[RMDB]
RNA sequence: GGGAACGACUCGAGUAGAGUCGAAAAGAUAUGGAGUGCGAACUACUUUCCUAGGCUCGUUGAAAUCGGAAACGAUGGAGAGCCUGGAAAGCGCACUCCUAAGUCAAAACAGGACUUCGGUCCUGAACGGACUAUCAUACUUCGGUAUGAUAGUCCGAAAAGAAACAACAACAACAAC
Reactivity to 2A3 in 0.01 (KOAc 150mM, MgCl2 10mM, bicine 150mM(pH8.5), 24C), signal-to-noise 1, nucleotides 027 to 126: g060a040u100a030u120g000g010a020g000u000g000c040g080a120a040c050u170a040c000u300u000u020c000c030u010a020g000g000c000u000c000g170u250u060g040a000a060a010u000c010g000g050a090a080a030c000g000a010u010g030g000a030g000a000g040c010c010u000g000g010a010a000a010g000c000g000c020a000c000u000c010c000u000a010a010g000u000c000a000a010a020a110c010a010g000g020a000c000u040u200c300g090g000u020c000c010u000g000a050a020
Reactivity to DMS in 0.01 (KOAc 150mM, MgCl2 10mM, bicine 150mM(pH8.5), 24C), signal-to-noise 1, nucleotides 027 to 126: g010a030u000a300u000g000g020a000g030u000g000c020g000a120a070c110u000a300c000u000u000u000c000c010u020a000g070g020c000u000c000g000u000u020g030a050a070a070u000c010g000g020a130a070a170c000g000a020u000g030g000a130g010a020g070c000c020u010g000g000a010a000a010g020c050g000c000a000c000u000c010c010u000a000a080g000u000c050a100a080a130a180c030a020g000g010a020c000u010u020c200g050g010u010c000c000u020g000a020a120